The data come from the RNA Mapping Database (RMDB), library OK2TRN. An RNA of 177 nucleotides, treated with DMS and read out base by base. Values cover nucleotides 27 to 126.
RNA sequence: GGGAACGACUCGAGUAGAGUCGAAAAUUUGUUGAGAUCGAACAAUAAAGUUAUCGUUGAAUGGACACGACGUCUGGGAUACACAAAGGAACAGCUAGCUGACAUGUGCUCUUAAAGCACGAGGUCAUGGGUAAGCACUGUUCGCAGUGCUUACCCAAAAAGAAACAACAACAACAAC
Reactivity to DMS in 0.01 (KOAc 150mM, MgCl2 10mM, bicine 150mM(pH8.5), 24C), signal-to-noise 1, nucleotides 027 to 126: u000u000u000g000u000u010g000a160g020a090u030c100g010a120a040c100a070a090u000a070a070a230g000u000u000a020u000c110g040u000u010g020a180a060u000g030g000a110c060a080c090g040a050c270g000u000c020u000g010g000g000a100u000a060c000a030c040a020a120a130g000g000a040a060c080a070g010c130u000a050g030c110u000g010a040c000a040u020g000u000g040c040u000c160u000u020a070a160a010g000c020a010c000g000a050g000g000u000c000a080